Background: This 177-nucleotide RNA was probed chemically with DMS. The DMS profile rests on 854 reads.
RNA sequence: GGGAACGACUCGAGUAGAGUCGAAAAUGACGCUUUGCGUGCCGGUGGCGAGCCUCAUCGGCGUUCUGACUUUCCUGCGUGACGAUGUGCAGUGCCAGUUCGUCAAUCUGACCGAUAUUUCAGGCGAUGACUACCCCGGAUUCGUCCGGGGUAGUCAAAAAGAAACAACAACAACAAC
Reactivity to DMS in 0.01 (KOAc 150mM, MgCl2 10mM, bicine 150mM(pH8.5), 24C), signal-to-noise 1, nucleotides 027 to 126: u030g000a090c090g010c040u000u000u020g000c110g010u030g000c000c050g000g020u000g010g020c100g000a180g010c060c050u000c020a030u000c060g030g010c030g000u000u000c010u040g000a100c150u000u000u000c160c020u020g030c060g030u030g010a090c120g000a140u000g020u000g020c070a120g020u000g040c010c050a070g000u000u000c090g010u000c030a050a070u000c080u000g000a130c070c080g040a130u000a020u010u000u000c040a160g000g020c050g010a130
DMS adducts were read by reverse transcription with MarathonRT.